The record gives the reactivity of an RNA of 207 nucleotides to DMS and 2A3. The 2A3 profile rests on 5,654 reads. Source: RMDB library OK3TST, as collected in RNAgym. The reactions ran in a buffer of 150 mM KOAc, 10 mM MgCl2 and 150 mM bicine (pH 8.5), at 24 C.
[RMDB]
RNA sequence: GGGAACGACUCGAGUAGAGUCGAAAAGAGGCGAAAUAAUUCCCAUCUCCUAUGUACGGCCGGAGAUGGGUGUGGCCGUACUAAUAAGCCUCAUAGUGACGAGAGUCACGAAUUCUGGAUAGCCUUUGGUAGUCGGCUAUCCUCUGACUACCGUAGACAUAAUCAUGGCAUUCGUGCCAUGAUUAUGAAAAGAAACAACAACAACAAC
Reactivity to DMS in 0.01 (KOAc 150mM, MgCl2 10mM, bicine 150mM(pH8.5), 24C), signal-to-noise 3, nucleotides 027 to 156: g000a020g020g030c010g000a080a100a100u000a100a140u000u000c010c010c010a150u000c030u000c020c020u010a170u000g030u010a020c040g000g030c040c070g040g020a130g010a070u010g020g010g040u010g030u010g000g020c000c010g000u010a150c030u010a070a100u000a110a230g020c000c010u010c010a150u010a180g020u010g010a030c010g020a280g000a300g020u000c000a020c020g000a070a080u000u010c010u000g020g000a120u000a050g000c020c010u000u000u010g020g030u000a070g020u000c080g010g000c090u000a070u000c090c080u000c000u000g000a030c030u000a040c010c010g010u000a120g000a200
Reactivity to 2A3 in 0.01 (KOAc 150mM, MgCl2 10mM, bicine 150mM(pH8.5), 24C), signal-to-noise 5, nucleotides 027 to 156: g020a000g000g010c030g080a100a060a060u200a030a080u120u030c010c010c010a020u050c060u060c010c020u100a060u150g020u020a030c020g030g030c050c020g070g030a090g020a070u140g050g020g000u060g020u050g010g000c020c000g000u010a000c000u020a020a120u080a070a000g000c000c000u000c010a050u100a040g040u020g000a000c010g010a010g000a010g120u000c010a000c010g000a020a040u140u060c040u090g020g010a030u030a030g010c000c000u060u020u080g060g010u040a040g050u050c020g010g000c010u020a060u040c000c010u010c020u010g010a010c020u030a050c010c020g050u040a040g020a070